[RMDB]
RNA sequence: GGGAACGACUCGAGUAGAGUCGAAAAGAUGCUCAACAGAUCCUCUGGCCGCGAGUGGUUGACCAUAAUGAUCGGGCGCUGCGCCAUAUUCAGGUCGGUGUGGGCGGCGGUACUCACGGUGUUGAGCCCUUGCUUUGUAAUUCGUUACAAAGCAAGGAAAAGAAACAACAACAACAAC
Reactivity to DMS in 0.01 (KOAc 150mM, MgCl2 10mM, bicine 150mM(pH8.5), 24C), signal-to-noise 6, nucleotides 027 to 126: g010a100u000g010c010u000c010a010a020c010a110g000a140u000c030c020u000c090u010g000g010c000c010g030c030g010a020g020u000g010g020u000u000g000a040c010c000a040u000a070a120u010g000a020u000c020g010g010g010c020g040c150u010g010c050g010c010c010a110u010a090u010u010c200a150g010g010u000c040g010g010u020g030u000g000g010g010c020g010g010c010g000g000u000a030c010u000c010a030c020g000g010u000g000u000u000g000a020g010c020
Reactivity to 2A3 in 0.01 (KOAc 150mM, MgCl2 10mM, bicine 150mM(pH8.5), 24C), signal-to-noise 5, nucleotides 027 to 126: g030a050u110g000c000u010c000a010a010c000a020g100a190u060c000c010u060c070u100g050g000c010c000g020c010g010a010g000u050g020g070u060u080g030a050c010c010a020u050a070a080u120g040a020u050c040g050g000g000c050g020c150u240g070c080g070c010c010a050u090a160u200u230c080a040g060g030u050c030g000g020u050g010u020g020g000g000c020g000g000c040g020g090u040a020c000u010c010a010c010g020g000u020g020u010u010g000a000g000c000